The record gives the reactivity of an RNA of 207 nucleotides to 2A3. The 2A3 profile rests on 398 reads. Reactivities are given for positions 27 through 156. Source: RMDB library ARCHII, as collected in RNAgym. 2A3 adducts were read by reverse transcription with SuperScript II with manganese. The reactions ran in a buffer of 150 mM KOAc, 10 mM MgCl2 and 150 mM bicine (pH 8.5), at 24 C.
RNA sequence: GGGAACGACUCGAGUAGAGUCGAAAAUGAGUUAAUGCACUCGGGUAAGGUAACAACCCCCAUGUCAAGAGGACCGACCUGCAGCCAAGCCUUUGGUUAUACCAAGGGUGCUGUUCACAGACUAAAUGAUGACGGGUUGCUAAUCACAAAGCGUGAUCCGCAAUAACUACUUCGGUAGUUAUUGCGGAAAAGAAACAACAACAACAAC
Reactivity to 2A3 in 0.01 (KOAc 150mM, MgCl2 10mM, bicine 150mM(pH8.5), 24C), signal-to-noise 1, nucleotides 027 to 156: u130g000a040g070u040u110a090a050u170g080c100a000c000u030c000g000g050g070u080a180a000g000g020u050a080a000c050a040a030c010c000c000c030c030a000u050g130u140c020a010a050g030a070g110g050a030c030c030g080a050c000c000u040g000c000a060g040c000c030a180a000g000c000c000u020u000u000g020g000u170u210a140u130a080c010c000a000a000g000g000g030u080g040c000u060g000u070u060c020a020c020a050g070a110c020u050a160a150a040u250g060a110u010g000a030c020g030g000g000u010u000g030c030u080a080a040u160c050a000c000a050a050a150g030c100g070u090g010a000u000